[RMDB]
RNA sequence: GGGAACGACUCGAGUAGAGUCGAAAACCGUCCGUUCGCGGACGGAAAAAACCUUUGUGUGCUCAGUAUUUGUCAGCGUUUAUCUUCCCAUUGGGAAGGUUUGACGCUUGGAUUUAAGAACCGCACACUCUGGUAAAAACGCCGUUUCGACGGCGAACAGUUGUCUAUGAUUCGUCAUAGACAACUGAAAAGAAACAACAACAACAAC
Reactivity to 2A3 in 0.01 (KOAc 150mM, MgCl2 10mM, bicine 150mM(pH8.5), 24C), signal-to-noise 3, nucleotides 027 to 156: c000c000g000u000c010c000g030u030u080c300g010c050g100g000a000c000g000g000a150a050a000a010a000a010c000c010u010u010u010g000u000g000u000g000c000u010c010a020g030u000a020u000u010u000g020u010c000a010g000c000g010u010u020u010a020u010c010u010u000c030c000c140a300u180u300g010g000g000a000a000g020g030u070u090u120g020a000c000g000c000u010u050g020g000a020u240u240u150a010a010g000a000a000c000c000g010c010a000c000a000c000u000c010u000g000g020u080a110a050a000a000a030c020g010c010c010g010u010u060u130c230g090a030c010g010g010c010g010a050a010
Reactivity to DMS in 0.01 (KOAc 150mM, MgCl2 10mM, bicine 150mM(pH8.5), 24C), signal-to-noise 2, nucleotides 027 to 156: c010c010g010u000c000c000g050u000u000c300g050c030g060g000a010c000g040g020a000a020a050a080a080a010c020c010u000u010u010g030u000g040u000g000c010u000c030a110g040u000a150u020u000u000g000u010c000a030g000c000g070u000u000u000a010u010c000u000u000c000c000c010a300u000u010g020g010g010a030a000g020g000u020u000u000g010a010c010g050c000u000u000g030g000a060u000u000u000a040a060g000a180a140c170c300g000c000a030c010a000c000u000c010u010g030g020u000a010a060a040a090a090c030g090c010c000g020u000u000u000c200g020a070c010g010g020c000g000a020a120
Source: RMDB library RNAMAK, as collected in RNAgym. Chemical mapping of a 207-nucleotide RNA with 2A3 and DMS. For 2A3, 5,978 sequencing reads were counted. The reactions ran in a buffer of 150 mM KOAc, 10 mM MgCl2 and 150 mM bicine (pH 8.5), at 24 C. High 2A3 reactivity points to a flexible backbone, as in loops and unpaired stretches. For DMS, 4,278 sequencing reads were counted. 2A3 adducts were read by reverse transcription with SuperScript II with manganese.